[RMDB]
RNA sequence: GGGAACGACUCGAGUAGAGUCGAAAAAAAACAGCUCAGUCUUUCAAGAGCUGGAAGAGGCAGAUCUGAAGGUCUUGAACGACAAGCAGGGUAGCGUCUUUGACGAAAUUGUCAUCACAAUUGAUGGGCUCGUGCUACUCUUCGGAGUAGCACGAGCAAAAGAAACAACAACAACAAC
Reactivity to 2A3 in 0.01 (KOAc 150mM, MgCl2 10mM, bicine 150mM(pH8.5), 24C), signal-to-noise 1, nucleotides 027 to 126: a000a000a000a000c060a000g010c000u000c000a000g050u000c010u000u130u000c010a010a000g020a160g150c060u050g070g000a030a000g000a000g080g010c200a020g130a300u000c000u000g000a040a000g110g020u090c000u010u080g010a010a020c120g060a060c000a030a030g000c000a050g000g020g100u130a030g120c000g080u030c070u030u040u270g030a000c020g060a100a130a150u110u060g000u070c000a000u050c070a000c060a300a000u060u150g000a020u070g160g000